Structure probing data (2A3) for a 177-nucleotide construct.
The reactions ran in a buffer of 150 mM KOAc, 10 mM MgCl2 and 150 mM bicine (pH 8.5), at 24 C.
[RMDB]
RNA sequence: GGGAACGACUCGAGUAGAGUCGAAAAUUCUGAAAAGCGACUAUCUUAAGAUGUAUCGUGGACGCUCCGUCGAUCAAGUCGGAGGGUUCGCUAUAUAUACUAACCUGGUUGCACAUAACCAAGUCGAACCAGUGCGUACCUUCGGGUACGCACUGGUAAAAGAAACAACAACAACAAC
Reactivity to 2A3 in 0.01 (KOAc 150mM, MgCl2 10mM, bicine 150mM(pH8.5), 24C), signal-to-noise 2, nucleotides 027 to 126: u080u010c060u000g080a060a090a000a000g080c000g040a000c000u000a000u150c140u170u180a140a000g000a090u000g000u000a000u020c000g030u000g000g000a000c000g120c210u000c000c010g030u000c000g150a300u180c180a200a250g010u020c000g000g000a000g010g140g000u000u000c000g010c000u000a000u000a000u000a000u000a010c060u020a020a000c020c070u040g010g010u050u070g130c200a050c070a150u220a010a010c030c000a180a000g020u050c040g020a030